[RMDB]
The record gives the reactivity of an RNA of 177 nucleotides to 2A3 and DMS.
For 2A3 the reverse transcriptase was SuperScript II with manganese.
For DMS, 1,288 sequencing reads were counted.
DMS adducts were read by reverse transcription with MarathonRT.

RNA sequence: GGGAACGACUCGAGUAGAGUCGAAAAACAGGCGUCGCUUCUGGAUAGCGCACAAGCAGAGCUCUCUUCACGCUUGGAGCCCACCACUCCAUGGCUCAGUUCGCUGCAACCCAAAGCAUACGUGAAGCGACGAGGAGGGAUUCGUCCCUCCUCGUCGAAAAGAAACAACAACAACAAC
Reactivity to 2A3 in 0.01 (KOAc 150mM, MgCl2 10mM, bicine 150mM(pH8.5), 24C), signal-to-noise 2, nucleotides 027 to 126: a000c060a080g080g000c030g020u080c040g010c010u080u000c040u130g050g070a140u150a020g030c030g010c020a010c030a050a040g020c040a030g020a010g050c010u000c000u030c010u040u040c010a050c030g010c000u000u000g010g000a000g000c030c030c000a040c000c010a060c010u000c000c010a030u040g030g000c000u000c020a000g040u090u100c020g000c010u080g000c010a060a020c000c000c000a000a070a000g080c020a050u020a060c020g020u030g030a020a000g030
Reactivity to DMS in 0.01 (KOAc 150mM, MgCl2 10mM, bicine 150mM(pH8.5), 24C), signal-to-noise 1, nucleotides 027 to 126: a100c110a040g010g010c000g000u010c120g000c010u070u090c090u010g000g000a060u020a070g010c000g000c100a030c090a090a090g010c090a100g000a080g030c020u000c130u000c070u050u070c040a140c080g000c060u000u000g000g000a000g000c140c050c050a180c160c100a300c070u000c000c000a040u000g000g010c030u000c030a050g010u000u030c070g010c050u010g030c100a000a060c030c050c030a010a070a130g000c040a070u040a010c040g050u040g000a010a010g010